[RMDB]
This 177-nucleotide RNA was probed chemically with DMS and 2A3. For DMS the reverse transcriptase was MarathonRT. The reactions ran in a buffer of 150 mM KOAc, 10 mM MgCl2 and 150 mM bicine (pH 8.5), at 24 C. High DMS reactivity at an A or C suggests that its Watson-Crick edge is free. Reactivities are given for positions 27 through 126.

RNA sequence: GGGAACGACUCGAGUAGAGUCGAAAAACCUUUGGGACAAGCGACGCAUACAGUUGAUCCACACUAACGUUGGUGUCGACAUACUAUCAGUCUCUAAGGAUUGAAAGUAAGUUGAUAAUGACCAAGUCGCUAUGAGAUCUUUCGAGAUCUCAUAGCGAAAAGAAACAACAACAACAAC
Reactivity to DMS in 0.01 (KOAc 150mM, MgCl2 10mM, bicine 150mM(pH8.5), 24C), signal-to-noise 1, nucleotides 027 to 126: a140c040c000u000u000u000g000g010g020a080c230a070a150g000c000g020a030c010g010c090a140u040a050c080a050g050u020u000g010a100u000c050c030a050c130a080c190u000a060a100c160g000u000u000g020g000u000g040u000c000g010a000c010a020u000a010c000u010a010u000c020a000g000u000c000u000c220u020a180a080g000g020a010u010u000g030a020a050a070g010u000a000a010g000u020u000g030a050u000a040a100u000g020a010c000c050a030a040g030u000
Reactivity to 2A3 in 0.01 (KOAc 150mM, MgCl2 10mM, bicine 150mM(pH8.5), 24C), signal-to-noise 3, nucleotides 027 to 126: a000c040c000u060u010u080g050g000g000a010c010a050a000g060c040g050a030c010g020c050a010u090a100c030a070g020u030u030g150a100u030c020c000a050c000a000c060u120a170a000c070g130u050u040g000g020u030g000u010c000g010a020c000a030u070a010c000u020a030u080c020a000g030u000c010u000c020u090a040a040g120g000a030u030u030g000a020a000a010g010u010a000a090g000u000u000g040a080u030a180a100u090g050a040c010c000a000a030g060u000